The data come from the RNA Mapping Database (RMDB), library OK3TST. This 207-nucleotide RNA was probed chemically with 2A3 and DMS. 2A3 adducts were read by reverse transcription with SuperScript II with manganese. High 2A3 reactivity points to a flexible backbone, as in loops and unpaired stretches. The reactions ran in a buffer of 150 mM KOAc, 10 mM MgCl2 and 150 mM bicine (pH 8.5), at 24 C.
RNA sequence: GGGAACGACUCGAGUAGAGUCGAAAAAAACUCGUGAAGUUGAGGACGUGUCCUACCGGAAAUAUAGAGCUCAGCAUGGAUAGAUGCGUCUCUGCGGAUACGUGCAUCAACUCCGCAUCGAACGAGCACCGGCGAGCGUACUCAGUGCCGUCAACGCAUCAUAGGGAAAGUUCGCUUUCCCUAUGAUAAAAGAAACAACAACAACAAC
Reactivity to 2A3 in 0.01 (KOAc 150mM, MgCl2 10mM, bicine 150mM(pH8.5), 24C), signal-to-noise 6, nucleotides 027 to 156: a010a000a010c060u060c030g040u060g060a070a020g010u010u010g000a000g020g070a000c000g000u010g030u020c000c000u030a110c030c080g190g080a050a140a010u270a030u090a050g030a000g030c070u050c140a040g000c040a040u060g070g140a070u100a170g160a020u030g010c000g030u010c010u000c010u030g070c050g010g000a010u010a020c020g010u040g070c020a180u030c000a010a040c010u040c010c020g050c010a100u130c100g050a050a040c020g010a020g020c020a020c060c000g050g010c040g050a060g000c040g010u070a080c050u040c090a040g040u030g100c020c000g070u030c030a040a030c050g030c100
Reactivity to DMS in 0.01 (KOAc 150mM, MgCl2 10mM, bicine 150mM(pH8.5), 24C), signal-to-noise 5, nucleotides 027 to 156: a060a040a010c010u010c020g030u000g000a050a060g020u000u000g010a060g000g000a060c010g030u000g000u000c000c010u010a300c060c010g010g000a040a120a110u000a160u000a070g010a080g020c090u000c050a120g030c020a060u000g020g020a240u000a150g010a070u000g010c010g000u000c010u010c030u000g010c110g010g010a050u010a010c030g020u000g020c040a170u000c020a030a050c040u000c010c030g000c050a140u000c050g000a090a040c050g000a090g010c010a210c030c000g030g000c030g000a180g050c040g020u000a090c040u010c030a170g040u000g020c000c030g000u000c040a090a080c070g000c130